RNA sequence: GGGAACGACUCGAGUAGAGUCGAAAACCCUGUCUCCUCGGUUCUUCUUCGAUCCGGACCGGCUCAUCUCGGCAAAAGGCGGCAGUCCUCAGUGCUCUUACUCUUUCCUAUAAAGAGGAGACUGCUGGCAGGAUACGUUUCGACGUAUCCAAAAGAAACAACAACAACAAC
Reactivity to 2A3 in 0.01 (KOAc 150mM, MgCl2 10mM, bicine 150mM(pH8.5), 24C), signal-to-noise 9, nucleotides 027 to 129: c000c000c010u010g020u000c010u000c000c000u010c010g050g000u050u030c020u100u010c010u060u070c070g060a070u020c020c020g020g030a060c020c010g010g000c010u010c020a100u020c030u020c020g030g010c030a050a060a030a020g070g000c000g010g000c020a020g030u040c010c010u040c020a050g030u060g110c020u010c000u060u130a260c000u020c000u040u050u030c030c040u140a140u170a230a060a010g010a000g010g000a010g000a000c000u010g000c010u010g060g040c040a090
Reactivity to DMS in 0.01 (KOAc 150mM, MgCl2 10mM, bicine 150mM(pH8.5), 24C), signal-to-noise 9, nucleotides 027 to 129: c040c000c020u030g030u010c030u000c000c010u030c050g030g030u000u000c060u000u000c020u050u020c090g020a100u000c050c040g000g030a130c100c030g000g000c010u030c030a080u030c000u000c010g060g000c110a050a050a100a090g010g030c040g000g040c040a050g000u030c030c010u010c040a080g020u030g050c120u030c010u030u040a180c030u020c020u010u010u000c130c110u040a120u080a070a060a040g030a010g020g010a040g010a020c030u020g000c020u020g010g010c130a100